Overview
Chemical mapping of a 177-nucleotide RNA with DMS. For DMS, 820 sequencing reads were counted.

[RMDB]
RNA sequence: GGGAACGACUCGAGUAGAGUCGAAAAUCUGUGCGGGAUGAAUAACAUUAAGUAACCGUGGUGUCUCUUCGCAUAUUGUGUGGUAAAGCAUGAGUUUGCCACUGAUAAGAAUCCCGAUGUAAUUUAGAUAAACACAACCGUUCGCGGUUGUGUUUAUAAAAGAAACAACAACAACAAC
Reactivity to DMS in 0.01 (KOAc 150mM, MgCl2 10mM, bicine 150mM(pH8.5), 24C), signal-to-noise 1, nucleotides 027 to 126: u000c040u000g010u000g000c030g040g010g030a010u010g000a130a050u010a080a090c060a070u000u010a070a130g010u000a080a130c150c140g020u020g030g000u000g000u010c030u000c010u040u010c060g010c040a080u000a010u000u000g010u000g020u000g030g000u000a010a030a010g010c080a200u010g000a150g030u000u000u000g000c000c000a010c000u000g000a040u000a060a110g000a150a120u010c000c000c020g000a080u000g040u010a080a100u010u000u010a120g000
Conditions: 150 mM KOAc, 10 mM MgCl2 and 150 mM bicine (pH 8.5), 24 C. The data come from the RNA Mapping Database (RMDB), library OK2TST.